[RMDB]
An RNA of 207 nucleotides, treated with 2A3 and read out base by base. The reactions ran in a buffer of 150 mM KOAc, 10 mM MgCl2 and 150 mM bicine (pH 8.5), at 24 C. The 2A3 profile rests on 430 reads.
RNA sequence: GGGAACGACUCGAGUAGAGUCGAAAAAACACUGAAUUCAAAUAGUCGCAAACGACGAAACUUACGCUUUAGCCGCUUAAGGCUAGCCGUUGCAGCAGUCGGUCAAUGGGCUGUGUGGCGAAAGCCACCGCAACGUCAUCUUACAUUGACUGGUUUCCGAGAAUGUAUGCUUCGGCAUACAUUCUCGAAAAGAAACAACAACAACAAC
Reactivity to 2A3 in 0.01 (KOAc 150mM, MgCl2 10mM, bicine 150mM(pH8.5), 24C), signal-to-noise 1, nucleotides 027 to 156: a000a010c260a090c130u300g020a130a130u190u100c010a030a070a100u280a140g000u020c010g000c090a190a300a060c120g000a010c010g110a190a090a000c060u110u100a030c060g030c030u150u120u180a000g020c000c090g170c140u270u190a270a020g000g010c010u000a000g080c000c000g000u000u000g000c000a000g000c000a000g000u000c050g050g000u030c000a000a000u020g000g010g070c000u000g030u000g000u000g060g020c010g050a060a000a000g000c000c000a000c000c020g010c000a000a030c000g120u090c050a140u060c000u020u030a010c010a010u000u000g000a000c020u000g040g030u030u000u000c080
2A3 adducts were read by reverse transcription with SuperScript II with manganese.